[RMDB]
RNA sequence: GGGAACGACUCGAGUAGAGUCGAAAAGAUAUGGAUAUAGGACAGCGAUAAGAACCAGUCGGAAACGACUGAGUUCUUUUGACGCUGACCUAUAUCCUAAGUCAAACAGGAUACUUCGGUAUCCUGACGAGGAGAUUAUGUUCGCAUAAUCUCCUCGAAAAGAAACAACAACAACAAC
Reactivity to 2A3 in 0.01 (KOAc 150mM, MgCl2 10mM, bicine 150mM(pH8.5), 24C), signal-to-noise 2, nucleotides 027 to 126: g030a000u030a030u080g000g000a010u000a000u010a010g010g030a000c010a010g020c060g160a090u060a300a020g000a000a000c010c000a020g010u010c000g030g000a060a030a040c000g000a000c000u000g040a010g010u000u000c010u030u020u020u040g050a050c150g030c010u020g010a000c000c000u000a000u000a000u020c000c000u010a000a000g020u000c010a010a080a130c010a010g000g010a000u020a010c000u070u200c300g120g000u000a000u000c000c020u010g010a050
Reactivity to DMS in 0.01 (KOAc 150mM, MgCl2 10mM, bicine 150mM(pH8.5), 24C), signal-to-noise 3, nucleotides 027 to 126: g000a030u000a280u000g000g010a020u010a010u010a000g010g010a220c010a010g020c000g030a200u010a020a010g000a000a000c010c000a010g020u000c000g020g000a090a080a080c000g010a010c000u000g000a070g020u000u000c000u000u000u010u010g010a110c160g020c000u010g010a050c000c000u000a000u000a000u000c000c010u010a010a030g010u000c030a120a130a300c000a020g000g010a010u000a000c000u000u020c230g030g010u000a000u000c000c000u000g000a040